Chemical mapping of a 177-nucleotide RNA with 2A3 and DMS.
The reactions ran in a buffer of 150 mM KOAc, 10 mM MgCl2 and 150 mM bicine (pH 8.5), at 24 C.
The DMS profile rests on 4,056 reads.
For 2A3 the reverse transcriptase was SuperScript II with manganese.
RNA sequence: GGGAACGACUCGAGUAGAGUCGAAAAUAGGUUAACAUACGGAUACAAGUGCGAGUGAGCUGAAGUGGCUAUGUUUCGCUCGUCGAUGGUAGUGCGGUCCUUUACGCAGGAAUCUUUUUAUCGCAUGGACCCCAUGUUAUUUCGAUAACAUGGGGUCAAAAGAAACAACAACAACAAC
Reactivity to 2A3 in 0.01 (KOAc 150mM, MgCl2 10mM, bicine 150mM(pH8.5), 24C), signal-to-noise 3, nucleotides 027 to 126: u130a030g070g020u080u090a060a000c010a020u100a080c040g040g050a000u050a070c000a080a050g020u010g170c000g020a020g020u040g040a020g050c000u040g040a180a020g100u110g050g000c010u020a010u140g000u010u190u070c020g010c000u000c000g030u000c000g060a060u070g050g080u000a070g040u010g050c030g000g010u030c020c010u030u110u090a060c090g000c020a020g000g090a060a060u020c010u050u070u020u070u200a110u050c020g010c060a030u040g070
Reactivity to DMS in 0.01 (KOAc 150mM, MgCl2 10mM, bicine 150mM(pH8.5), 24C), signal-to-noise 2, nucleotides 027 to 126: u010a110g000g000u000u010a060a020c090a040u010a130c070g000g000a150u040a030c150a090a070g020u010g020c000g010a100g010u000g000a040g000c010u030g040a130a070g010u000g000g040c000u000a040u010g010u000u030u000c000g030c050u010c050g000u010c070g010a070u030g020g000u020a030g000u000g010c040g010g000u000c000c000u030u070u010a120c200g000c080a030g000g030a080a040u010c000u000u010u000u000u010a040u030c010g000c060a060u030g000